[RMDB]
The data come from the RNA Mapping Database (RMDB), library 15KLIB. The record gives the reactivity of an RNA of 170 nucleotides to 2A3 and DMS. For DMS, 18,183 sequencing reads were counted. DMS adducts were read by reverse transcription with MarathonRT.
RNA sequence: GGGAACGACUCGAGUAGAGUCGAAAAAAGAAAGCAACGGGGCUAGCGAGUGGAUGUUCCGCCCCCCGAGGGGGCCGAGUGAGGCUUAUCCCGGGGAUCGGCGUCGCCCCCACAUAGCAGACCCCGGAAACCACAACGUUCGCGUUGUGGAAAAGAAACAACAACAACAAC
Reactivity to 2A3 in 0.01 (KOAc 150mM, MgCl2 10mM, bicine 150mM(pH8.5), 24C), signal-to-noise 7, nucleotides 027 to 129: a000a000g200a010a030a000g090c060a040a070c000g000g000g000g000c010u040a070g000c030g030a020g020u000g000g020a020u020g040u090u000c060c010g000c020c000c000c000c000c000g030a300g000g000g000g000g000c000c010g040a080g150u300g080a100g010g000c000u040u070a130u140c000c000c000g000g000g000g010a050u150c190g000g000c000g000u030c020g010c010c010c000c040c000a000c000a020u270a000g000c010a000g010a300c000c000c000c000g000g010a040a000a000
Reactivity to DMS in 0.01 (KOAc 150mM, MgCl2 10mM, bicine 150mM(pH8.5), 24C), signal-to-noise 5, nucleotides 027 to 129: a040a050g040a100a100a060g040c130a130a060c030g000g010g010g060c020u050a080g030c010g020a180g000u020g010g000a120u030g010u020u020c110c010g000c040c000c020c010c010c020g000a110g010g000g000g000g000c000c030g000a160g070u090g010a060g000g000c020u010u030a130u000c030c030c060g000g000g000g000a040u020c110g010g010c030g000u010c080g020c000c000c000c010c000a030c020a060u100a300g030c030a000g010a190c010c000c000c040g020g020a050a000a150